[RMDB]
RNA sequence: GGGAACGACUCGAGUAGAGUCGAAAAGCAUCGUGCGGGUGCUCAAUUACUUUGAGGAGAACGGCACCGCGUACCUCGUCAUGGAGUUUCUGGAAGGCGAAACGCUCGGCGAGGCCAUUCAGAAGCGUGCUGUGUGAACGUUCGCGUUCACACAGCAAAAAGAAACAACAACAACAAC
Reactivity to DMS in 0.01 (KOAc 150mM, MgCl2 10mM, bicine 150mM(pH8.5), 24C), signal-to-noise 1, nucleotides 027 to 126: g000c080a050u000c090g000u000g000c040g000g000g010u010g030c010u010c090a060a160u010u000a040c070u000u000u010g030a090g000g000a030g000a150a090c300g000g000c010a050c010c070g020c020g020u010a040c020c050u000c080g020u000c060a100u040g050g000a160g020u000u000u000c000u000g010g000a030a090g000g020c000g000a060a060a160c040g000c010u000c290g050g000c000g020a060g030g000c050c000a160u020u000c040a030g000a060a030g020c050g020
Reactivity to 2A3 in 0.01 (KOAc 150mM, MgCl2 10mM, bicine 150mM(pH8.5), 24C), signal-to-noise 1, nucleotides 027 to 126: g040c020a000u110c060g080u060g000c020g020g050g000u030g020c000u020c040a000a050u130u070a270c050u100u080u260g190a200g120g000a050g030a100a000c030g020g080c080a030c000c040g060c000g020u030a060c000c050u020c010g130u020c050a140u110g060g000a120g040u000u000u050c020u010g000g070a040a000g090g010c080g100a150a020a020c010g030c040u230c170g200g030c000g000a020g080g000c000c000a030u040u000c050a010g020a080a010g100c120g020